[RMDB]
RNA sequence: GGGAACGACUCGAGUAGAGUCGAAAAAUUUCUAAGCGGACGGAAUAGUUCCAUAGUGUACACACUCUGACCAGUCAGUCGUGCGCAGUCGAUCGCGUUCUGUUAAGGGGAAAAAUGUGACCUUUACAGAUGCAUCCUGUUUUGCGACAAAUGAAGCUACUCUCUCUAGUUUCGACUAGAGAGAGUAAAAAGAAACAACAACAACAAC
Reactivity to DMS in 0.01 (KOAc 150mM, MgCl2 10mM, bicine 150mM(pH8.5), 24C), signal-to-noise 2, nucleotides 027 to 156: a090u000u010u000c020u000a090a160g000c050g000g020a100c040g020g000a080a120u010a090g010u000u000c020c030a090u010a060g030u010g080u000a110c070a030c040a060c030u010c020u000g030a210c090c060a130g010u020c040a090g020u000c020g030u000g020c300g000c020a040g030u010c100g030a030u000c100g060c020g030u000u000c020u010g030u000u000a050a050g020g010g000g050a000a070a080a110a090u010g030u000g000a220c030c000u000u000u000a000c010a000g020a070u000g020c030a050u000c030c020u000g000u000u000u000u000g000c030g010a110c040a020a100a080u010g000a110a140g000c040
Reactivity to 2A3 in 0.01 (KOAc 150mM, MgCl2 10mM, bicine 150mM(pH8.5), 24C), signal-to-noise 4, nucleotides 027 to 156: a010u050u040u010c030u030a070a030g050c050g040g050a020c010g020g020a160a090u070a110g060u060u020c030c020a070u080a110g090u120g090u220a050c120a000c000a030c070u090c040u050g090a100c020c030a020g150u130c030a010g000u010c020g000u010g010c020g000c010a030g030u120c110g030a000u010c120g000c010g030u090u010c020u000g030u050u040a010a000g030g010g010g110a100a090a010a080a120u250g100u170g150a060c000c000u000u000u010a010c000a000g010a010u000g000c000a010u000c000c010u000g030u010u040u100u200g000c000g010a000c000a000a040a010u150g030a070a010g020c020